Structure probing data (DMS and 2A3) for a 170-nucleotide construct.
The RNA was probed in 150 mM KOAc, 10 mM MgCl2 and 150 mM bicine (pH 8.5) at 24 C.
RNA sequence: GGGAACGACUCGAGUAGAGUCGAAAAAGAAGAGGACAUGGACGCGAACCGUGAGUGGAACCCUCGAUCCUUUAUUGGGGGGUACACUCGAGGAGUGGAAGGCGGGUAGGGGGGACCCCAGGGUCAAGUAGCACGGUGUUCGCACCGUGCAAAAGAAACAACAACAACAAC
Reactivity to DMS in 0.01 (KOAc 150mM, MgCl2 10mM, bicine 150mM(pH8.5), 24C), signal-to-noise 3, nucleotides 027 to 129: a070g020a120a010g010a060g000g000a090c110a070u050g030g000a060c130g040c120g000a110a150c050c050g030u010g030a010g020u030g050g020a070a180c060c000c030u020c010g000a060u050c270c210u030u040u040a050u020u000g000g000g000g000g000g000u020a090c100a010c020u020c030g010a090g030g010a090g040u070g010g010a000a080g010g020c070g000g000g000u000a040g010g010g030g010g010g000a070c030c010c030c060a130g000g040g000u060c090a060a090g030u060a060
Reactivity to 2A3 in 0.01 (KOAc 150mM, MgCl2 10mM, bicine 150mM(pH8.5), 24C), signal-to-noise 2, nucleotides 027 to 129: a000g040a000a000g020a020g050g030a000c020a030u120g010g000a010c040g000c000g020a030a070c000c030g060u110g030a000g010u010g020g030a160a040c000c000c000u020c000g040a050u050c070c060u120u200u210a130u070u030g000g000g000g000g010g020u070a000c000a000c000u010c010g000a020g000g000a030g030u120g050g080a040a030g020g010c030g010g000g020u100a050g000g000g000g010g000g020a010c000c000c000c000a040g050g000g000u050c020a000a040g020u050a010